[RMDB]
RNA sequence: GGGAACGACUCGAGUAGAGUCGAAAAUCAUUAGAAGCAAGUCAGUAAGUCCCCUUCACACUCAGGGGAGGGGAUUACAUGAGGAUCUGAAUACAGAAGGUGGAGAUCAUUGAGGGCUACCUUAGAGACAUUGGAUAAAGUUCGCUUUAUCCAAUGUAAAAGAAACAACAACAACAAC
Reactivity to DMS in 0.01 (KOAc 150mM, MgCl2 10mM, bicine 150mM(pH8.5), 24C), signal-to-noise 9, nucleotides 027 to 126: u000c060a090u010u010a070g010a080a100g020c070a100a170g010u000c030a070g010u000a030a050g010u000c000c000c000c000u000u000c010a050c040a130c230u020c280a100g010g010g010g000a010g010g000g000g000a100u000u000a010c040a070u000g010a050g000g010a210u000c020u000g000a080a090u000a110c130a080g000a050a020g000g020u000g000g000a060g010a080u000c070a120u010u010g010a100g010g010g010c040u000a040c030c030u000u000a090g010a150g000
Reactivity to 2A3 in 0.01 (KOAc 150mM, MgCl2 10mM, bicine 150mM(pH8.5), 24C), signal-to-noise 4, nucleotides 027 to 126: u070c010a010u060u160a030g030a110a000g060c040a060a020g090u060c030a010g010u040a060a010g230u070c010c010c000c000u000u030c030a070c020a030c080u300c160a060g000g040g000g000a010g000g000g000g020a010u010u010a010c030a140u050g020a010g070g010a010u000c020u050g040a080a040u150a140c050a060g160a070a020g050g010u030g020g020a070g010a040u090c050a120u090u170g070a110g040g070g000c010u020a030c010c010u050u060a070g030a010g010